[RMDB]
RNA sequence: GGGAACGACUCGAGUAGAGUCGAAAAUCUGUGUCCAGCAGUCCUGAUCCAACCAGAGUAUUCGUGCUCUGGUUGUGUUUCGGUUGUUAUUGCUGGACAGCUCGACGAUUCAUGGAGCCAUCAAGGACACCUUGUUGAGCUUCGGCUCAACAAGGUGAAAAGAAACAACAACAACAAC
Reactivity to DMS in 0.01 (KOAc 150mM, MgCl2 10mM, bicine 150mM(pH8.5), 24C), signal-to-noise 1, nucleotides 027 to 126: u010c030u000g000u000g020u010c000c000a030g000c000a010g010u040c010c000u010g000a000u000c020c020a020a010c030c000a000g000a010g040u000a020u000u070c300g000u030g020c000u010c000u010g000g020u000u000g000u000g030u020u020u020c000g020g030u010u020g000u050u020a010u000u000g010c010u000g010g000a010c010a000g000c030u000c060g020a060c130g000a060u000u020c100a070u050g000g000a050g010c000c070a110u000c080a120a070g000g030a190
Reactivity to 2A3 in 0.01 (KOAc 150mM, MgCl2 10mM, bicine 150mM(pH8.5), 24C), signal-to-noise 3, nucleotides 027 to 126: u030c000u020g100u010g000u030c010c010a000g000c000a000g000u000c000c000u000g000a000u020c000c000a000a000c000c000a000g000a020g040u020a120u120u230c300g060u210g050c010u000c000u000g010g000u000u000g010u010g010u010u030u000c030g030g000u060u020g040u170u080a020u020u000g000c020u000g000g000a000c000a000g000c020u000c000g210a170c050g080a120u070u180c040a100u300g070g000a020g020c050c000a090u090c070a080a120g100g040a030

This 177-nucleotide RNA was probed chemically with DMS and 2A3. The data come from the RNA Mapping Database (RMDB), libraries RFM100 and RFMREP. Conditions: 150 mM KOAc, 10 mM MgCl2 and 150 mM bicine (pH 8.5), 24 C.